[RMDB]
RNA sequence: GGGAACGACUCGAGUAGAGUCGAAAAUAAGCAAGUCGUCGAACAAUUUGCCGCGCAGUUUGCCAGCUUACAAGAUACUUAUAUGCGCGAGCGCGCCAGUGAUCUGCGGGCAUUGGGUCAGCGCUUGUAGAUGUAUUCAAUUCGUUGAAUACAUCUAAAAAGAAACAACAACAACAAC
Reactivity to 2A3 in 0.01 (KOAc 150mM, MgCl2 10mM, bicine 150mM(pH8.5), 24C), signal-to-noise 7, nucleotides 027 to 126: u130a030a000g030c010a010a010g040u110c020g020u030c030g060a050a020c020a050a080u050u070u200g020c010c010g100c010g010c030a030g010u050u060u050g050c020c010a030g020c030u090u070a060c040a090a050g050a190u080a100c040u200u120a120u060a060u300g060c050g000c010g020a030g040c060g000c000g010c000c010a010g010u020g030a100u050c010u030g010c070g060g020g010c010a010u010u030g030g020g060u080c040a060g000c010g000c000u010u020g000
Reactivity to DMS in 0.01 (KOAc 150mM, MgCl2 10mM, bicine 150mM(pH8.5), 24C), signal-to-noise 9, nucleotides 027 to 126: u010a090a140g010c020a040a040g010u000c030g040u000c080g010a070a100c120a050a060u000u010u000g010c010c020g010c030g010c030a040g000u000u000u010g010c040c060a110g010c060u000u010a080c160a080a110g000a100u010a070c130u000u010a090u010a070u010g010c120g020c040g000a050g020c030g010c070g000c040c070a050g010u000g000a040u000c020u000g020c060g020g000g010c010a020u000u000g000g000g000u010c020a080g010c020g010c010u000u000g010